[RMDB]
RNA sequence: GGGAACGACUCGAGUAGAGUCGAAAAAUGGAAGUUAGUCUACUCGCUAUCCUAGUUACUUUGGAGUAAUCUAAAGUGUGUGUAAACGGGCGAAAGUCUGUAAAAUACUGGGGACAUAGGGUCAACAAGAACUAGUAGACCUUCGGGUCUACUAGAACGAUGUCAAUUUCUUCGGAAAUUGACAUCGAAAAGAAACAACAACAACAAC
Reactivity to 2A3 in 0.01 (KOAc 150mM, MgCl2 10mM, bicine 150mM(pH8.5), 24C), signal-to-noise 2, nucleotides 027 to 156: a000u060g020g010a000a060g000u040u050a040g050u110c030u040a040c010u030c020g020c030u040a070u110c000c010u020a020g040u050u070a020c030u040u020u050g040g000a020g010u110a120a130u020c010u050a050a020a000g010u020g000u000g010u010g040u100a080a120a040c010g000g000g010c010g050a080a010a000g020u000c000u010g040u050a020a100a000a000u150a060c020u030g000g000g000g030a000c040a050u140a060g070g000g010u040c010a050a040c030a160a030g090a050a030c000u000a000g000u000a000g000a000c000c000u020u050c130g030g000g010u000c000u010a000c000u000a000g000a020a000
Reactivity to DMS in 0.01 (KOAc 150mM, MgCl2 10mM, bicine 150mM(pH8.5), 24C), signal-to-noise 1, nucleotides 027 to 156: a070u000g000g000a060a110g040u000u000a050g030u010c030u000a040c010u010c000g010c150u010a070u030c010c030u000a110g030u000u000a030c010u000u010u010g030g010a060g000u010a120a180u000c010u010a030a010a000g000u010g020u010g050u000g010u010a090a210a050c000g000g010g030c010g000a130a100a160g000u000c010u000g030u000a030a070a060a030u000a030c050u000g040g030g020g020a030c040a070u000a140g000g000g030u000c020a130a070c090a030a090g000a080a200c000u000a010g010u000a040g000a010c000c010u000u000c290g040g030g030u000c000u010a010c000u000a000g000a040a120